[RMDB]
RNA sequence: GGGAACGACUCGAGUAGAGUCGAAAACGGCUACAAGGAAGAGAUUGACAGUGUGGAGGAGUAUUUGAAAUACUUCCUUCGCGAAUGAGGGAGUUCUUCGAUCGUAUCCAGGGUUACUAUGUCAAACCCUUCCUAAGUAAUUCGUUACUUAGGAAGGAAAAGAAACAACAACAACAAC
Reactivity to DMS in 0.01 (KOAc 150mM, MgCl2 10mM, bicine 150mM(pH8.5), 24C), signal-to-noise 9, nucleotides 027 to 126: c100g010g000c050u010a050c080a080a120g000g000a050a040g000a070g000a080u000u010g010a130c090a080g010u010g030u000g000g000a010g000g000a050g010u000a000u000u000u010g000a100a090a060u000a010c000u010u010c000c000u000u000c020g020c030g010a080a090u010g010a100g010g010g010a080g010u000u000c040u000u000c030g010a080u000c130g010u000a070u000c030c030a100g010g010g010u000u000a060c120u000a060u010g000u000c090a060a090a110c190
Reactivity to 2A3 in 0.01 (KOAc 150mM, MgCl2 10mM, bicine 150mM(pH8.5), 24C), signal-to-noise 9, nucleotides 027 to 126: c020g020g000c020u060a030c040a080a050g100g020a030a030g030a010g020a100u050u120g060a040c030a040g060u020g000u010g160g010a010g010g010a010g010u010a030u030u100u180g220a160a160a010u020a000c000u180u180c000c000u000u000c010g000c010g040a080a130u150g020a070g010g080g010a040g020u040u000c000u010u010c020g100a110u050c040g020u050a030u020c010c010a010g040g020g000u050u040a070c060u090a070u190g080u060c040a060a020a180c010